Chemical mapping of a 207-nucleotide RNA with 2A3 and DMS. Values cover nucleotides 27 to 156.
RNA sequence: GGGAACGACUCGAGUAGAGUCGAAAACCGUAGGGAUCCAAAGGUCUUGGAUUUAUGGUAAAACUAUAUUCGAAAGAGUAUAGGAGUACGCCAUUGUCAGACCUUGGAUCCCUAAACGGAAAACUCUUACAUGUGGGUUCGCCCACAUGUAAGAGAAGCAGGAUAAUAACUUCGGUUAUUAUCCUGCAAAAGAAACAACAACAACAAC
Reactivity to 2A3 in 0.01 (KOAc 150mM, MgCl2 10mM, bicine 150mM(pH8.5), 24C), signal-to-noise 2, nucleotides 027 to 156: c000c000g000u040a000g000g000g000a020u010c020c020a190a090a080g000g030u010c030u110u190g190g030a050u260u300u180a000u020g000g000u030a030a030a030a000c000u000a000u000a010u000u000c010g050a120a090a070g000a040g020u000a000u000a010g040g020a050g130u020a020c130g010c000c000a000u000u010g020u030c010a000g000a000c000c010u000u020g000g000a000u020c000c000c000u000a000a010a000c000g050g010a010a070a110a090c010u000c030u010u000a000c000a000u000g000u010g000g000g070u060u090c190g130c010c000c000a000c000a000u000g000u000a000a000g000a000g010a010a000
Reactivity to DMS in 0.01 (KOAc 150mM, MgCl2 10mM, bicine 150mM(pH8.5), 24C), signal-to-noise 1, nucleotides 027 to 156: c000c020g000u000a060g000g020g020a010u000c020c010a020a050a160g060g000u000c000u030u000g050g010a090u000u000u000a000u020g000g020u020a020a110a160a300c020u000a000u020a010u000u000c010g030a270a150a300g000a040g050u000a000u000a020g010g010a110g020u000a080c170g010c000c000a000u000u010g010u000c000a050g010a030c010c000u000u000g010g010a000u000c000c010c000u000a000a010a040c010g020g000a120a110a110a140c000u000c030u000u000a000c000a010u000g020u000g000g020g000u000u020c300g060c000c000c010a000c000a000u000g000u000a000a010g000a010g000a050a080
The data come from the RNA Mapping Database (RMDB), library RNAMAK. The DMS profile rests on 1,963 reads. Conditions: 150 mM KOAc, 10 mM MgCl2 and 150 mM bicine (pH 8.5), 24 C.